Conditions: 150 mM KOAc, 10 mM MgCl2 and 150 mM bicine (pH 8.5), 24 C. An RNA of 177 nucleotides, treated with DMS and read out base by base.

[RMDB]
RNA sequence: GGGAACGACUCGAGUAGAGUCGAAAAAAGAUAUGGACGUCCUGACAAGCAUCGAUCUAUAUGGAGGCUAUGGUCGGAAACGACCAUAGUGAAGUAUAGGGAGCUUGGAGGGACGUCCUAAGUCAAACAAAACGCAUCUGUUCGCAGAUGCGUUUUGAAAAGAAACAACAACAACAAC
Reactivity to DMS in 0.01 (KOAc 150mM, MgCl2 10mM, bicine 150mM(pH8.5), 24C), signal-to-noise 1, nucleotides 027 to 126: a170a030g000a030u010a290u030g000g000a010c010g020u000c000c000u000g000a300c010a000a000g060c000a300u000c160g010a000u010c010u000a010u000a000u000g010g000a300g010g020c000u000a000u000g010g030u010c000g000g030a030a100a160c010g010a000c010c000a000u000a000g010u000g000a140a220g000u000a040u000a030g000g000g000a010g050c000u000u010g010g000a300g020g000g000a000c010g000u000c000c000u000a010a070g010u000c040a050a110a130